[RMDB]
RNA sequence: GGGAACGACUCGAGUAGAGUCGAAAAUAUGUACAAAAUGAUGCAACCCAAACGUUCAAUAUUUAGCGUAUUCCAAGAUCGACGUAUGUUAGGCAAAUUACUUAUCUUCAGUAUACUGGGCAUGUUAAUACUCUCUCUAGUUCGCUAGAGAGAGUAUAAAAGAAACAACAACAACAAC
Reactivity to 2A3 in 0.01 (KOAc 150mM, MgCl2 10mM, bicine 150mM(pH8.5), 24C), signal-to-noise 5, nucleotides 027 to 126: u060a000u010g040u020a040c030a040a210a100a130u140g080a080u060g040c010a040a060c020c000c000a010a070a030c040g040u070u070c050a090a050u060a120u190u160u110a060g000c020g000u020a070u090u030c020c010a050a010g030a070u070c030g030a020c060g090u050a020u140g050u020u040a020g040g000c030a020a070a100u100u040a040c020u070u050a040u110c020u060u040c020a010g010u040a040u010a120c030u030g050g000g000c020a010u040g030u090u060a050
Reactivity to DMS in 0.01 (KOAc 150mM, MgCl2 10mM, bicine 150mM(pH8.5), 24C), signal-to-noise 7, nucleotides 027 to 126: u010a040u000g020u000a060c080a090a080a120a100u010g010a100u000g010c040a080a100c020c010c010a060a100a100c130g010u000u000c100a060a060u000a060u000u000u000a090g010c050g020u000a050u000u000c040c050a040a080g000a070u000c050g010a060c100g000u010a030u000g010u000u000a060g010g010c060a040a050a070u000u010a050c050u010u000a050u000c060u000u000c060a050g020u000a060u010a060c060u000g000g000g010c070a040u000g010u000u000a070